Source: RMDB library RNAMAK, as collected in RNAgym. An RNA of 207 nucleotides, treated with 2A3 and read out base by base. For 2A3 the reverse transcriptase was SuperScript II with manganese. The 2A3 profile rests on 2,370 reads. Reactivities are given for positions 27 through 156.

[RMDB]
RNA sequence: GGGAACGACUCGAGUAGAGUCGAAAAGGGGUCUUGUCGCAACGCAUUAGCUUUUGACGAGCUGAAGCCUCCACGGCUCGAUAAGCUAAUGAACUACGUUGCGUCAAGACGGAGGCACCCAAAGACAUGCAUUCACCUUCGGGUGAAUGCAUGUCAAGUGUCAUGUACCGUUCGCGGUACAUGACACAAAAGAAACAACAACAACAAC
Reactivity to 2A3 in 0.01 (KOAc 150mM, MgCl2 10mM, bicine 150mM(pH8.5), 24C), signal-to-noise 3, nucleotides 027 to 156: g090g020g020g010u010c000u000u000g010u000c010g010c000a000a010c020g000c050a000u020u020a010g000c020u070u240u300u280g220a190c100g000a000g000c010u020g030a070a010g010c020c010u010c000c000a010c030g010g000c000u000c020g060a090u040a250a090g000c010u010a010a010u030g010a010a020c100u280a060c100g000u000u010g000c010g000u000c000a010a000g000a000c010g010g000a000g000g000c000a060c010c000c000a030a070a000g020a000c000a000u000g010c000a000u000u000c000a000c010c010u050u110c300g110g000g010u020g000a000a000u000g000c000a010u000g000u010c010a000a020
Overview
Conditions: 150 mM KOAc, 10 mM MgCl2 and 150 mM bicine (pH 8.5), 24 C.